Record summary:
The record gives the reactivity of an RNA of 170 nucleotides to 2A3 and DMS. Conditions: 150 mM KOAc, 10 mM MgCl2 and 150 mM bicine (pH 8.5), 24 C. For DMS, 10,551 sequencing reads were counted. The 2A3 profile rests on 4,609 reads. It was measured as part of the RMDB library 15KLIB.
RNA sequence: GGGAACGACUCGAGUAGAGUCGAAAAGGGGAAGGAUCUCGAGGAAAACAUCUCCCAAGAAGAAGCGGGAACAAUCUCAAGAAGAGGAGGAUUCCCCGAGACGCUGACGGAAACCCCGGGAACAAGGAUGCAAGCGGGUUCGCCCGCUUGAAAAGAAACAACAACAACAAC
Reactivity to 2A3 in 0.01 (KOAc 150mM, MgCl2 10mM, bicine 150mM(pH8.5), 24C), signal-to-noise 3, nucleotides 027 to 129: g050g010g000g000a030a080g060g050a060u030c010u020c020g010a020g020g040a000a050a010a000c050a120u080c040u000c040c020c000a000a010g040a060a010g010a020a010g080c090g000g040g060a020a020c060a060a120u060c010u000c040a050a060g040a060a020g050a060g010g030a000g000g050a020u040u050c030c010c000c000g030a030g000a020c040g010c040u040g020a030c040g020g030a000a040a080c000c000c000c000g000g000g000a030a030c070a000a010g070g020a010u040g000
Reactivity to DMS in 0.01 (KOAc 150mM, MgCl2 10mM, bicine 150mM(pH8.5), 24C), signal-to-noise 4, nucleotides 027 to 129: g000g000g010g000a060a050g070g040a040u010c010u010c030g070a070g040g020a060a080a110a130c150a160u050c050u030c000c030c010a020a010g000a020a030g030a080a100g000c000g010g020g010a050a050c160a070a110u050c060u020c090a150a000g020a000a000g000a060g040g000a040g000g000a120u000u000c040c030c000c070g020a080g020a030c080g040c040u000g020a070c130g000g020a060a070a130c010c040c030c010g040g010g040a050a070c040a080a080g020g010a070u040g010